This 207-nucleotide RNA was probed chemically with 2A3.
It was measured as part of the RMDB library M2RFPK.
The reactions ran in a buffer of 150 mM KOAc, 10 mM MgCl2 and 150 mM bicine (pH 8.5), at 24 C.
RNA sequence: GGGAACGACUCGAGUAGAGUCGAAAACAUUACGAAUUCAGUCGCAAAUUGUAGAAUUAGCUACUCUACGAUCUAGUGAGCGUUAGUAACGUUGUAAUAUAAUAUAGUCUUUGGAAGGAUUAUAUUGGAGCCGCGGACAAGUUCGCUUGUCCGCGAACAAACCCAAAUGCUUCGGCAUUUGGGUUUGAAAAGAAACAACAACAACAAC
Reactivity to 2A3 in 0.01 (KOAc 150mM, MgCl2 10mM, bicine 150mM(pH8.5), 24C), signal-to-noise 1, nucleotides 027 to 156: c050a040u260u300a050c040g020a180a120u100u200c050a070g080u030c010g010c040a120a110a060u060u010g000u000a000g000a020a040u020u000a020g010c020u050a060c000u000c000u000a020c020g020a010u020c020u110a110g120u040g050a040g120c100g060u030u120a030g100u120a140a040c110g010u000u010g060u060a100a070u080a120u000a170a010u020a000u010a000g000u000c000u100u130u080g180g050a090a110g010g000a000u010u010a020u010a000u010u000g010g020a100g210c170c010g000c040g000g000a000c000a000a000g010u050u170c170g060c080u000u000g000u000c000c000g010c000g000a000a000